[RMDB]
RNA sequence: GGGAACGACUCGAGUAGAGUCGAAAACAUUAGCUUCGGCAUCCCACCCUACGGCUUCGAAAAGCUGAGAUGAGCUCAGCAAGGCAACUCAAGAGACUCAACUCAGAGAACUCAGAGAGAGAAUAAACACCAUGAAUAGUUUCGACUAUUCAUGGUGAAAAGAAACAACAACAACAAC
Reactivity to 2A3 in 0.01 (KOAc 150mM, MgCl2 10mM, bicine 150mM(pH8.5), 24C), signal-to-noise 3, nucleotides 027 to 126: c020a050u060u200a030g020c010u060u060c130g050g010c000a090u060c040c000c000a050c010c010c000u060a080c070g000g000c000u050u040c050g090a080a080a040a040g020c000u020g000a010g020a060u070g030a020g060c000u000c000a000g000c010a000a010g050g010c010a050a100c030u020c050a070a060g030a050g060a300c020u000c010a020a080c020u030c040a080g020a020g020a100a040c020u030c120a010g030a000g010a010g010a010g030a140a050u140a080a170a020
Reactivity to DMS in 0.01 (KOAc 150mM, MgCl2 10mM, bicine 150mM(pH8.5), 24C), signal-to-noise 3, nucleotides 027 to 126: c110a080u020u010a090g000c030u010u010c120g010g020c020a180u010c000c010c010a170c090c040c060u000a080c040g020g010c010u000u000c030g010a090a100a080a130g010c000u000g010a040g000a180u000g000a090g020c020u000c000a020g010c280a060a040g010g040c170a040a090c020u000c010a180a150g000a060g000a080c000u000c010a050a060c080u000c050a080g000a140g000a050a120c020u000c000a030g010a150g000a130g000a060g000a090a050u020a040a060a170